[RMDB]
RNA sequence: GGGAACGACUCGAGUAGAGUCGAAAAUAGACAUUUAGUUUCAUUUGUUUCUGGUUAAACUGAAUUUUGAUAAUUUUCCAUCCUGUUGAUUUAAUUUUAUUUCUUGAACAUGUGAAAUAGUAAUGUGAAUACAUUAGGCUUUCGAGCCUAAUGUAUUAAAAGAAACAACAACAACAAC
Reactivity to DMS in 0.01 (KOAc 150mM, MgCl2 10mM, bicine 150mM(pH8.5), 24C), signal-to-noise 4, nucleotides 027 to 126: u020a150g020a110c020a010u000u000u000a140g010u000u000u000c050a040u000u000u000g010u000u000u020c050u000g000g010u000u000a010a030a040c080u000g000a030a030u000u000u000u010g010a120u020a050a090u010u010u000u010c100c090a090u000c050c120u000g000u000u000g010a070u000u010u000a050a040u010u010u000u010a050u010u010u000c010u000u010g010a040a020c020a020u010g020u000g000a020a050a050u000a100g000u010a030a010u000g000u000g000